[RMDB]
RNA sequence: GGGAACGACUCGAGUAGAGUCGAAAAGAUAUGGACCGAUGUAGGGAGAUCGUGUAGUCGGAAACGACUACGAUCAUCGAUCUACUGUCGGUCCUAAGUCAAAGGACUGGAGUUCGCUCCAGUCCAAGUUUAGGGUUGUGUUCGCACAACCCUAAACAAAAGAAACAACAACAACAAC
Reactivity to DMS in 0.01 (KOAc 150mM, MgCl2 10mM, bicine 150mM(pH8.5), 24C), signal-to-noise 2, nucleotides 027 to 126: g000a030u010a300u000g030g010a000c000c010g000a020u000g000u000a000g000g000g010a300g000a030u020c090g030u000g000u000a000g010u010c010g020g020a110a080a230c000g010a010c000u000a000c000g000a020u010c110a250u010c140g010a280u010c010u000a000c000u010g040u000c000g010g010u000c000c000u000a000a130g010u010c060a080a110a210g020g010a010c010u010g000g000a040g000u000u030c300g020c000u000c000c000a010g000u000c000c010a000a020
Reactivity to 2A3 in 0.01 (KOAc 150mM, MgCl2 10mM, bicine 150mM(pH8.5), 24C), signal-to-noise 2, nucleotides 027 to 126: g040a040u090a060u140g010g000a000c000c020g040a000u040g010u050a000g040g040g060a140g000a030u040c080g080u120g110u280a020g000u020c010g000g020a090a080a020c030g030a000c010u030a000c010g010a040u040c000a000u250c040g060a050u010c010u000a030c110u130g080u000c000g000g000u020c000c000u000a000a000g000u010c010a000a060a160g000g020a000c000u000g000g000a000g030u120u180c290g130c190u010c000c010a020g020u000c000c000a000a000
The record gives the reactivity of an RNA of 177 nucleotides to DMS and 2A3. The reactions ran in a buffer of 150 mM KOAc, 10 mM MgCl2 and 150 mM bicine (pH 8.5), at 24 C. DMS adducts were read by reverse transcription with MarathonRT. 2A3 adducts were read by reverse transcription with SuperScript II with manganese. For 2A3, 3,576 sequencing reads were counted.